[RMDB]
RNA sequence: GGGAACGACUCGAGUAGAGUCGAAAAGGGUCUUGCGCAAUGGGAACCUGUGAACCAUGUCAGGUCCGGAAGGAAGCAGCAUUAAUCAGUGCUUCUCAUGUGCCGCGAGGUUGCCUGGCCCGAGCUAACCGAUAGAAAUAUUCGUAUUUCUAUCGGUAAAAGAAACAACAACAACAAC
Reactivity to DMS in 0.01 (KOAc 150mM, MgCl2 10mM, bicine 150mM(pH8.5), 24C), signal-to-noise 9, nucleotides 027 to 126: g010g010g010u000c010u000u000g010c010g010c010a100a020u000g000g000g000a020a020c010c000u000g000u010g000a120a150c300c250a020u000g000u010c010a300g000g000u000c000c000g010g070a130a140g010g000a020a010g000c010a230g000c010a010u000u010a140a120u000c020a010g000u010g000c160u000u000c000u000c010a010u000g010u010g010c110c040g020c010g000a010g000g010u000u010g000c010c000u000g000g000c000c000c000g000a090g010c130u020a110
Reactivity to 2A3 in 0.01 (KOAc 150mM, MgCl2 10mM, bicine 150mM(pH8.5), 24C), signal-to-noise 9, nucleotides 027 to 126: g020g000g010u100c000u000u010g000c010g000c000a010a010u010g010g010g000a010a020c000c000u000g010u010g020a060a080c110c040a040u010g050u070c000a000g010g020u000c000c000g060g070a100a070g010g000a010a000g000c010a000g000c000a000u010u060a050a060u060c010a000g020u020g100c160u020u000c000u000c000a020u080g120u080g230c120c020g000c000g010a000g030g020u130u170g110c000c000u020g020g020c000c000c000g010a040g020c040u100a050
This 177-nucleotide RNA was probed chemically with DMS and 2A3. Reactivities are rounded to 0.1 and cut off at 0 and 3. DMS adducts were read by reverse transcription with MarathonRT. Conditions: 150 mM KOAc, 10 mM MgCl2 and 150 mM bicine (pH 8.5), 24 C.